[RMDB]
RNA sequence: GGGAACGACUCGAGUAGAGUCGAAAAGAUUAUGUGGGAGAGGCGCCCUUUCGUUUCGUCGGAUAAUUAAUUGCCAGUCGCUGGCUUUAGCGAUAUUGAUGUCAUCUGUAGCGAUGACUAUGCUACAUUAAGGUAUGAUCCGGAUACCACCGGUAAAAAUAGUACGCUCAUUCGUGAGCGUACUAUUAAAAGAAACAACAACAACAAC
Reactivity to 2A3 in 0.01 (KOAc 150mM, MgCl2 10mM, bicine 150mM(pH8.5), 24C), signal-to-noise 3, nucleotides 027 to 156: g030a030u130u120a060u220g020u060g010g000g010a080g000a050g000g050c000g030c010c000c000u050u070u040c020g000u020u030u050c010g000u000c030g020g010a040u040a080a040u300u080a080a180u200u140g000c020c030a050g050u090c010g000c100u010g060g000c000u090u060u130a000g010c000g000a010u020a090u070u170g100a080u110g020u010c020a010u000c050u070g190u160a010g040c010g060a000u030g010a000c000u000a080u110g010c010u020a080c000a140u110u070a050a070g000g010u100a060u030g040a070u050c000c010g000g000a010u040a040c010c030a040c020c000g050g000u030a030a030a000
Reactivity to DMS in 0.01 (KOAc 150mM, MgCl2 10mM, bicine 150mM(pH8.5), 24C), signal-to-noise 2, nucleotides 027 to 156: g010a170u000u010a050u010g020u000g020g030g000a150g000a070g010g050c050g040c020c030c030u000u020u010c060g020u000u000u010c010g020u020c010g020g030a080u010a060a110u000u010a030a110u000u000g000c020c020a170g000u010c030g030c040u000g010g030c120u010u010u010a030g020c000g010a080u000a090u000u020g000a110u000g000u010c010a030u000c010u010g040u000a120g020c140g010a040u010g010a080c050u000a060u000g000c050u000a080c010a060u000u000a080a050g010g030u000a090u010g020a050u000c010c010g030g010a160u000a080c050c020a130c010c020g010g020u000a010a050a100
An RNA of 207 nucleotides, treated with 2A3 and DMS and read out base by base. The DMS profile rests on 3,822 reads. For 2A3 the reverse transcriptase was SuperScript II with manganese. It was measured as part of the RMDB library OK3TST.